[RMDB]
RNA sequence: GGGAACGACUCGAGUAGAGUCGAAAAGGCGCAAUGAUGAACUUGCGACAAUGCUUAAGCAAUCCCAUUGUCUGAGUCACAGAUUCGUGCUUAGGAUCGCAUUGUAGUUCAUCACAAUGGGAGCGCAGCUCACCUGACUAUUCGUAGUCAGGUGAGCAAAAGAAACAACAACAACAAC
Reactivity to DMS in 0.01 (KOAc 150mM, MgCl2 10mM, bicine 150mM(pH8.5), 24C), signal-to-noise 9, nucleotides 027 to 126: g010g010c000g010c010a120a090u000g000a030u000g010a030a010c020u000u000g030c100g020a180c140a030a040u000g010c010u000u000a020a030g010c010a070a140u000c020c010c020a060u000u000g010u000c080u000g000a140g010u000c170a150c070a060g010a030u000u000c110g010u000g000c020u000u000a020g000g000a070u000c160g010c030a030u000u000g020u000a020g010u000u000c000a000u000c010a030c090a040a030u000g000g000g010a170g000c060g010c020a100
Reactivity to 2A3 in 0.01 (KOAc 150mM, MgCl2 10mM, bicine 150mM(pH8.5), 24C), signal-to-noise 6, nucleotides 027 to 126: g060g000c010g000c020a050a280u130g010a010u020g000a010a010c010u010u070g020c020g020a010c040a000a040u050g000c000u020u040a020a000g000c010a020a060u030c010c000c010a030u010u050g020u000c020u030g040a050g140u150c050a040c010a200g030a030u050u060c030g030u070g010c010u020u010a010g000g020a040u060c060g000c040a030u000u060g030u030a010g000u000u000c000a000u010c000a000c010a000a030u030g000g000g010a030g000c010g000c000a000
The record gives the reactivity of an RNA of 177 nucleotides to DMS and 2A3. Conditions: 150 mM KOAc, 10 mM MgCl2 and 150 mM bicine (pH 8.5), 24 C. The data come from the RNA Mapping Database (RMDB), library OK2TRN.